[RMDB]
RNA sequence: GGGAACGACUCGAGUAGAGUCGAAAAGGGGUUAGCGUUUGCAAAACGCUGUUAUUGCAAUGAUCUGGAUUUAGCGCAAGUAGCUCCGAAAUCCAGAUCAACAUUUCGGACCUCCGCGCUAAUAAAAUACGUCCGUACAAUUCGUUGUACGGACGUAAAAAGAAACAACAACAACAAC
Reactivity to DMS in 0.01 (KOAc 150mM, MgCl2 10mM, bicine 150mM(pH8.5), 24C), signal-to-noise 1, nucleotides 027 to 126: g000g010g010g000u000u000a050g010c000g000u000u000u000g010c200a030a040a030a020c050g020c110u000g000u000u010a100u000u010g020c040a080a080u010g000a040u000c030u000g000g000a020u000u000u010a060g000c120g030c030a120a060g050u000a140g020c030u020c100c030g010a020a000a000u000c040c030a000g010a010u000c030a000a010c090a020u000u000u010c050g010g000a090c060c020u010c010c030g030c070g010c040u010a050a040u000a050a080a050a090
Conditions: 150 mM KOAc, 10 mM MgCl2 and 150 mM bicine (pH 8.5), 24 C. The record gives the reactivity of an RNA of 177 nucleotides to DMS. Reactivities are given for positions 27 through 126. For DMS the reverse transcriptase was MarathonRT. Source: RMDB library M2PK90, as collected in RNAgym.